[RMDB]
RNA sequence: GGGAACGACUCGAGUAGAGUCGAAAAAUAGUCAGUGAAUAACGGACACUGUGUCUGUGAGCUUCAGUCUUGGGUGAAUUUGGGCAUCCUGAGAUUCCCUGAGUCUAAUCAGUUCUCAGCAAGGGCUUGCUCAAGUCUCCAGAUCUUGGAGGAUGGGCCUUUAACUUUAAUUCGUUAAAGUUAAAGGAAAAGAAACAACAACAACAAC
Reactivity to 2A3 in 0.01 (KOAc 150mM, MgCl2 10mM, bicine 150mM(pH8.5), 24C), signal-to-noise 6, nucleotides 027 to 156: a010u130a020g070u060c050a000g030u030g100a100a080u150a220a040c070g030g060a010c030a010c080u150g040u050g060u100c030u030g060u030g060a040g040c010u040u030c030a020g010u020c020u110u170g050g010g010u140g100a140a080u020u020u020g010g000g000c010a010u040c010c000u040g020a050g010a140u130u150c050c020c000u010g000a010g010u010c060u110a110a180u100c070a030g050u170u030c010u000c010a020g000c040a060a060g040g030g020c070u040u040g000c000u010c020a010a030g020u000c000u000c010c000a020g000a160u080c050u090u100g010g010a010g030g030a040u080g030g050g000
Reactivity to DMS in 0.01 (KOAc 150mM, MgCl2 10mM, bicine 150mM(pH8.5), 24C), signal-to-noise 3, nucleotides 027 to 156: a110u000a080g040u000c010a030g030u010g010a140a110u000a130a080c040g020g010a090c010a120c110u000g000u000g000u000c030u010g000u000g000a120g020c030u010u000c040a050g010u000c020u000u000g030g020g020u000g010a050a120u000u000u000g020g020g010c020a040u000c020c010u010g010a180g010a140u000u010c060c100c010u000g010a070g000u000c050u000a120a150u010c100a100g010u000u010c010u000c010a080g040c100a110a280g010g020g000c110u010u000g000c000u000c020a030a010g020u000c010u000c010c010a060g000a030u000c030u000u000g010g010a020g030g020a090u000g010g020g030
Conditions: 150 mM KOAc, 10 mM MgCl2 and 150 mM bicine (pH 8.5), 24 C. Structure probing data (2A3 and DMS) for a 207-nucleotide construct. DMS adducts were read by reverse transcription with MarathonRT. The 2A3 profile rests on 5,160 reads. It was measured as part of the RMDB library OK3TST.